[RMDB]
RNA sequence: GGGAACGACUCGAGUAGAGUCGAAAAGGGGUCUCCUAAGACAGCGAUCGACAUGUCCCAUACUGAAGCCUCCACGGUAUGAGGACAACAGCGAUCGUCGAGGAGACGGAGGCACCCAAAACGCAUUGUUUCACGUUUCGACGUGAAACAAUGCGAACCAAGUUUCUCGAUUCGUCGAGAAACUUGGAAAAGAAACAACAACAACAAC
Reactivity to 2A3 in 0.01 (KOAc 150mM, MgCl2 10mM, bicine 150mM(pH8.5), 24C), signal-to-noise 1, nucleotides 027 to 156: g070g020g000g040u000c000u010c000c000u020a110a040g000a000c000a000g000c000g020a000u030c000g120a180c200a300u120g000u000c000c000c000a000u000a010c000u000g030a070a000g010c000c000u040c010c000a120c010g030g000u010a000u000g080a220g150g030a020c010a090a030c060a040g060c010g000a000u010c000g000u020c000g000a020g000g000a000g010a000c030g020g000a000g010g030c010a070c020c010c010a040a110a030a030c020g010c010a000u020u010g000u020u000u000c000a020c030g000u060u120u220c280g150a040c000g010u000g000a000a000a000c000a000a000u000g020c000g000a000a000
An RNA of 207 nucleotides, treated with 2A3 and read out base by base.
For 2A3 the reverse transcriptase was SuperScript II with manganese.
The 2A3 profile rests on 1,091 reads.